[RMDB]
RNA sequence: GGGAACGACUCGAGUAGAGUCGAAAAUCUCGUCUUCCUCGGUCAACCUCCUGAGUUCCUCUUCUUCCUCCCUGCUGAGGUUCUUUCCUCCCGCGGAGAGUUGCUUCCUCUUGUUCUCGAGGGCCUUAAAGGUAUCCCUUCGGGGAUACCAAAAGAAACAACAACAACAAC
Reactivity to 2A3 in 0.01 (KOAc 150mM, MgCl2 10mM, bicine 150mM(pH8.5), 24C), signal-to-noise 4, nucleotides 027 to 129: u020c000u000c000g020u000c040u120u030c010c020u010c020g010g000u020c030a040a030c010c010u040c000c020u070g030a030g040u050u020c010c010u030c000u070u000c020u080u060c010c010u030c000c000c000u030g020c050u040g030a050g050g000u090u060c020u040u060u050c020c010u020c000c010c020g010c030g010g010a010g010a010g030u050u060g030c040u040u070c000c010u030c020u060u090g020u050u010c030u020c030g010a080g000g010g040c010c000u070u160a090a030a020
Reactivity to DMS in 0.01 (KOAc 150mM, MgCl2 10mM, bicine 150mM(pH8.5), 24C), signal-to-noise 3, nucleotides 027 to 129: u060c050u000c030g040u030c040u020u020c090c010u020c050g020g050u030c060a040a080c100c040u030c030c020u000g040a160g010u000u010c060c020u000c060u030u030c070u030u010c000c000u040c000c010c040u020g040c130u040g000a050g050g070u020u030c070u000u020u020c000c040u020c030c020c030g050c050g000g000a000g030a000g020u030u020g040c090u000u000c000c000u030c050u030u040g030u020u020c070u020c060g000a140g000g000g000c120c000u000u000a070a100a150
Chemical mapping of a 170-nucleotide RNA with 2A3 and DMS. For 2A3, 9,227 sequencing reads were counted. Source: RMDB library 15KLIB, as collected in RNAgym. The reactions ran in a buffer of 150 mM KOAc, 10 mM MgCl2 and 150 mM bicine (pH 8.5), at 24 C. The DMS profile rests on 16,639 reads. 2A3 adducts were read by reverse transcription with SuperScript II with manganese.